The record gives the reactivity of an RNA of 177 nucleotides to 2A3 and DMS. For DMS, 1,324 sequencing reads were counted. For DMS the reverse transcriptase was MarathonRT. The RNA was probed in 150 mM KOAc, 10 mM MgCl2 and 150 mM bicine (pH 8.5) at 24 C.
RNA sequence: GGGAACGACUCGAGUAGAGUCGAAAAGAUAUGGAGCGAUAUUGGCUAUAAUCCAACUGGGUCGGAAACGACCUUUGGGUAGCCAGCGCUCCUAAGUCAAACUAUGCUCUCUUCGGAGAGCAUAGAAGGAUUUGAGAAUGUUCGCAUUCUCAAAUCCAAAAGAAACAACAACAACAAC
Reactivity to 2A3 in 0.01 (KOAc 150mM, MgCl2 10mM, bicine 150mM(pH8.5), 24C), signal-to-noise 1, nucleotides 027 to 126: g010a000u010a010u100g040g010a020g030c010g060a070u090a260u300u280g020g050c010u040a080u220a300a050u050c000c000a000a060c170u170g060g050g000u000c020g030g000a060a020a040c020g000a000c020c010u000u010u040g010g020g030u130a000g000c000c000a010g090c000g000c020u000c000c010u030a030a000g000u000c010a000a060a100c000u000a010u020g000c020u000c000u000c000u000u080c270g000g000a000g030a000g020c000a000u000a000g000a060a040
Reactivity to DMS in 0.01 (KOAc 150mM, MgCl2 10mM, bicine 150mM(pH8.5), 24C), signal-to-noise 2, nucleotides 027 to 126: g000a030u000a120u010g000g000a020g010c030g000a140u040a140u010u020g000g040c010u030a170u000a270a080u000c000c030a010a020c300u010g050g010g000u000c000g000g000a040a020a170c010g010a010c000c000u000u020u000g000g000g000u010a000g020c000c000a060g000c050g000c010u000c000c000u010a040a050g000u000c010a140a170a280c000u000a020u000g000c010u000c000u000c000u000u030c270g000g000a000g000a010g000c000a000u000a000g010a100a040